[RMDB]
RNA sequence: GGGAACGACUCGAGUAGAGUCGAAAAACAAAGGUGAGGUAGUCGAGCUUAAAUGCAGCAAAAGCACAAAAUUGUGUGCCACUGAUUCCCCCCAUACAAACACAUCCAUGUUGGUGUGCCCGACAUGACUCUAAGUCCGGUUCGCCGGACUUAGAGUAAAAGAAACAACAACAACAAC
Reactivity to DMS in 0.01 (KOAc 150mM, MgCl2 10mM, bicine 150mM(pH8.5), 24C), signal-to-noise 1, nucleotides 027 to 126: a020c260a050a090a150g000g030u000g040a030g000g050u000a000g000u000c040g050a060g020c050u050u020a040a050a030u000g000c020a040g050c070a010a000a150a170g020c000a000c020a000a070a150a140u040u010g050u000g000u000g010c020c050a020c020u010g000a050u030u000c010c000c020c010c030c030a000u120a020c150a010a140a100c050a040c090a030u040c020c070a010u040g000u010u000g000g020u000g000u000g000c040c000c010g000a070c120a070u000g010
Reactivity to 2A3 in 0.01 (KOAc 150mM, MgCl2 10mM, bicine 150mM(pH8.5), 24C), signal-to-noise 1, nucleotides 027 to 126: a010c000a060a070a010g000g010u090g030a040g070g070u150a010g060u060c060g030a000g010c000u050u050a060a050a110u210g000c010a000g020c010a050a040a280a080g070c040a000c120a110a110a150a120u210u200g070u010g000u000g020c000c000a130c070u070g000a160u040u000c000c000c000c010c000c000a040u110a040c030a000a140a010c040a000c010a170u000c050c020a070u060g030u030u050g010g000u080g150u210g200c000c040c010g000a000c000a010u090g050
This 177-nucleotide RNA was probed chemically with DMS and 2A3. Values cover nucleotides 27 to 126. The DMS profile rests on 1,513 reads.